[RMDB]
RNA sequence: GGGAACGACUCGAGUAGAGUCGAAAAGGAACUCAGGUCUUGUGCCAAAACCUAUGUUUUUAUUUUGCAUUGUAUCUCUGGGAAGAAAACAUUAUUUAGGGAGAAAACUGGAUAAAAGUAAGAUGACAAAACGUACACAUUUCGAUGUGUACGUUUUAAAAGAAACAACAACAACAAC
Reactivity to DMS in 0.01 (KOAc 150mM, MgCl2 10mM, bicine 150mM(pH8.5), 24C), signal-to-noise 3, nucleotides 027 to 126: g010g010a090a070c030u010c090a070g010g000u000c020u000u000g030u010g010c040c070a080a040a120a100c040c030u010a090u010g010u000u000u000u000u010a110u020u000u010u000g000c040a090u000u020g010u000a060u000c030u010c050u020g020g000g020a070a100g000a060a060a060a060c110a050u010u000a080u000u000u010a060g030g010g030a120g000a070a050a080a060c050u000g000g020a070u000a030a020a100a100g020u000a040a100g000a090u020g000a100c120
Reactivity to 2A3 in 0.01 (KOAc 150mM, MgCl2 10mM, bicine 150mM(pH8.5), 24C), signal-to-noise 1, nucleotides 027 to 126: g100g000a050a050c040u040c060a030g110g000u000c070u160u240g040u130g120c050c000a080a080a000a030c000c030u050a120u160g040u020u040u040u000u020a080u000u110u050u080g030c010a020u110u070g060u120a120u000c040u000c010u070g070g020g000a070a000g120a040a180a010a000c020a020u020u240a030u020u250u120a030g020g020g040a020g080a040a060a000a000c050u080g060g020a070u080a070a130a020a000g070u020a050a000g080a110u120g000a040c070
Source: RMDB library OK2TRN, as collected in RNAgym. An RNA of 177 nucleotides, treated with DMS and 2A3 and read out base by base. 2A3 adducts were read by reverse transcription with SuperScript II with manganese. The RNA was probed in 150 mM KOAc, 10 mM MgCl2 and 150 mM bicine (pH 8.5) at 24 C. For 2A3, 683 sequencing reads were counted. For DMS, 1,936 sequencing reads were counted.